[RMDB]
RNA sequence: GGGAACGACUCGAGUAGAGUCGAAAAAAUGAAGGGACAGGAAUUAGGAAUGUCUCUUUGUCUGGAACAGAGGGAGGUAUAUCAAUUUCGGUAGGCCGAGAUAUCGUUUCAGUCGUCAUUCUUCCAUUGACGAUUCGAUUGUUGCUCGUCCACAUAAUCAUACGUCAAGGUUCGCCUUGACGUAUGAAAAAGAAACAACAACAACAAC
Reactivity to 2A3 in 0.01 (KOAc 150mM, MgCl2 10mM, bicine 150mM(pH8.5), 24C), signal-to-noise 2, nucleotides 027 to 156: a000a030u150g010a030a030g010g000g020a010c020a000g110g060a070a160u160u160a150g050g050a090a010u080g010u010c000u000c000u000u000u010g010u000c020u050g030g010a090a040c030a070g000a030g010g030g010a030g000g090u060a090u030a010u100c100a110a190u030u050u180c020g050g000u050a030g020g020c000c010g010a000g020a050u140a030u050c030g020u030u100u080c030a000g030u000c000g000u000c010a040u080u050c040u110u050c070c040a060u030u000g010a010c020g000a000u020u020c030g050a080u020u130g060u100u100g020c000u010c020g010u000c040c010a020c000a040u280a080a070
Reactivity to DMS in 0.01 (KOAc 150mM, MgCl2 10mM, bicine 150mM(pH8.5), 24C), signal-to-noise 2, nucleotides 027 to 156: a010a080u010g030a020a010g030g010g030a060c040a090g040g010a100a230u020u000a200g000g000a230a110u010g010u000c010u000c010u000u010u010g020u000c000u000g010g010a160a080c060a120g020a060g000g020g010a080g010g040u000a080u000a080u030c080a060a170u000u010u010c080g020g040u000a090g010g050c050c020g010a110g010a080u010a100u000c080g020u000u010u010c050a060g040u000c010g010u010c010a030u020u000c100u010u000c190c090a220u000u020g010a020c010g030a040u000u000c050g040a080u000u010g030u010u010g000c000u000c090g000u000c020c000a090c050a030u010a060a250
Conditions: 150 mM KOAc, 10 mM MgCl2 and 150 mM bicine (pH 8.5), 24 C. Chemical mapping of a 207-nucleotide RNA with 2A3 and DMS. For 2A3, 1,308 sequencing reads were counted. 2A3 adducts were read by reverse transcription with SuperScript II with manganese. Values cover nucleotides 27 to 156. The DMS profile rests on 4,254 reads.